[RMDB]
RNA sequence: GGGAACGACUCGAGUAGAGUCGAAAAUGAACUAACGGUGGCAAGGUUAUACCUACAGAUCAUAGUGUACUGCUGCUGCUACGAUCCUGAAUCAAACUCUCUACAUUGGAAACAAGAUGACCACUGUCCCAAAGUCAGUAUGCCUAGUUUGUCAAUCCCCAUAUCCUGUAUUCGUACAGGAUAUGGGAAAAGAAACAACAACAACAAC
Reactivity to 2A3 in 0.01 (KOAc 150mM, MgCl2 10mM, bicine 150mM(pH8.5), 24C), signal-to-noise 4, nucleotides 027 to 156: u120g030a040a030c050u080a090a050c080g040g010u040g040g000c030a040a090g020g000u120u090a090u110a150c020c040u070a050c060a060g080a080u080c020a030u080a070g050u060g030u070a090c030u040g010c000u000g020c020u030g010c010u060a020c040g030a020u070c030c040u040g060a020a050u040c040a000a020a160c040u050c000u000c030u110a060c040a160u040u120g030g040a050a040a070c060a080a060g040a070u090g010a020c020c020a060c050u050g070u070c000c010c050a020a000a010g100u060c020a020g000u040a050u030g000c000c000u050a080g020u060u020u030g010u050c030a040a070u100c000
Reactivity to DMS in 0.01 (KOAc 150mM, MgCl2 10mM, bicine 150mM(pH8.5), 24C), signal-to-noise 2, nucleotides 027 to 156: u000g020a060a100c070u000a130a100c050g000g020u010g020g040c020a140a090g020g040u000u010a090u000a090c040c000u010a300c040a060g000a040u000c040a070u000a000g040u000g020u000a090c070u010g040c040u000g040c020u010g000c000u020a060c030g000a100u000c030c030u020g000a080a100u000c050a080a040a080c150u010c060u000c050u000a090c100a180u000u020g000g000a120a050a090c070a050a080g010a090u010g000a110c030c030a090c050u000g020u000c010c010c020a070a050a120g010u010c040a070g000u000a060u000g000c010c090u000a120g010u000u000u010g020u020c020a070a290u020c010

Chemical mapping of a 207-nucleotide RNA with 2A3 and DMS. Values cover nucleotides 27 to 156. For 2A3 the reverse transcriptase was SuperScript II with manganese. For DMS, 2,877 sequencing reads were counted. The 2A3 profile rests on 2,074 reads. Conditions: 150 mM KOAc, 10 mM MgCl2 and 150 mM bicine (pH 8.5), 24 C.